[RMDB]
RNA sequence: GGGAACGACUCGAGUAGAGUCGAAAAGUGUUAGACUUGCUUAAUAAGGGUAUGCAACUUUUGCAUACAAAGGUCUCCUGGGCUGGUUCUAAAAUCAUUGCUGUUAUCUACAGCGGCAGGGAGUCUCGAGGUAGGGGGUUCGCCCCCUACAAAAGAAACAACAACAACAAC
Reactivity to DMS in 0.01 (KOAc 150mM, MgCl2 10mM, bicine 150mM(pH8.5), 24C), signal-to-noise 6, nucleotides 027 to 129: g000u010g020u030u050a000g000a100c050u010u020g020c050u020u040a110a060u040a040a080g000g000g000u000a010u000g000c020a020a160c300u010u050u030u010g040c010a000u000a010c040a030a130a100g040g000u020c000u030c000c030u000g020g020g060c050u020g030g010u000u000c120u030a050a060a120a100u000c110a110u000u000g030c030u030g030u000u000a090u040c170u020a040c090a000g030c070g000g080c040a260g010g000g010a040g020u000c010u030c020g030a200g060
Reactivity to 2A3 in 0.01 (KOAc 150mM, MgCl2 10mM, bicine 150mM(pH8.5), 24C), signal-to-noise 5, nucleotides 027 to 129: g050u070g040u080u080a010g000a080c050u020u070g060c000u130u100a080a030u140a210a110g160g000g000u010a000u000g000c010a090a100c120u150u240u250u040g000c000a010u020a010c030a010a100a010g000g000u000c010u000c010c050u030g010g140g000c010u020g000g060u090u030c130u150a030a070a050a140u090c050a070u060u180g000c000u010g020u070u060a140u130c080u070a030c020a010g000c000g020g010c000a010g000g050g000a020g030u000c010u060c110g020a040g030
The record gives the reactivity of an RNA of 170 nucleotides to DMS and 2A3. For DMS, 19,333 sequencing reads were counted. The reactions ran in a buffer of 150 mM KOAc, 10 mM MgCl2 and 150 mM bicine (pH 8.5), at 24 C. For 2A3 the reverse transcriptase was SuperScript II with manganese.